Chemical mapping of a 177-nucleotide RNA with DMS and 2A3. For 2A3 the reverse transcriptase was SuperScript II with manganese. Source: RMDB library OK1LIB, as collected in RNAgym. The RNA was probed in 150 mM KOAc, 10 mM MgCl2 and 150 mM bicine (pH 8.5) at 24 C. DMS adducts were read by reverse transcription with MarathonRT. For 2A3, 1,528 sequencing reads were counted.
[RMDB]
RNA sequence: GGGAACGACUCGAGUAGAGUCGAAAAUCGUGAGAUGUGGUGCCUCACGCGCUCGAGGCGUCCGUGGUCAGAGAGACCACUGACGCAAAAACUCGAGCGCAAAUAAACGGCAUUACAUGUAGAAUAAGCUCAUUAGCUGAUUCGUCAGCUAAUGAGCAAAAGAAACAACAACAACAAC
Reactivity to DMS in 0.01 (KOAc 150mM, MgCl2 10mM, bicine 150mM(pH8.5), 24C), signal-to-noise 1, nucleotides 027 to 126: u020c070g020u010g020a090g010a040u000g000u000g000g000u000g000c010c000u020c080a120c300g070c000g000c000u010c000g010a000g020g000c000g000u000c010c110g010u000g000g000u000c000a300g000a100g000a260g000a000c010c000a040c000u000g000a080c000g000c000a010a000a040a000a260c000u000c000g000a000g060c020g010c000a010a070a030u000a040a010a050c260g000g000c000a020u000u000a000c000a000u000g060u000a040g000a060a010u010a110a090
Reactivity to 2A3 in 0.01 (KOAc 150mM, MgCl2 10mM, bicine 150mM(pH8.5), 24C), signal-to-noise 1, nucleotides 027 to 126: u120c080g010u100g130a210g000a060u000g000u000g000g000u000g000c000c010u060c040a110c090g000c000g000c010u000c000g000a000g020g000c000g000u000c000c000g000u000g030g000u000c050a110g090a080g010a020g000a300c020c000a000c000u010g000a000c000g000c000a020a060a100a000a060c000u000c000g000a000g000c000g000c000a000a000a000u090a020a040a000c040g000g000c000a000u000u000a000c000a000u010g100u100a000g050a110a110u190a150a010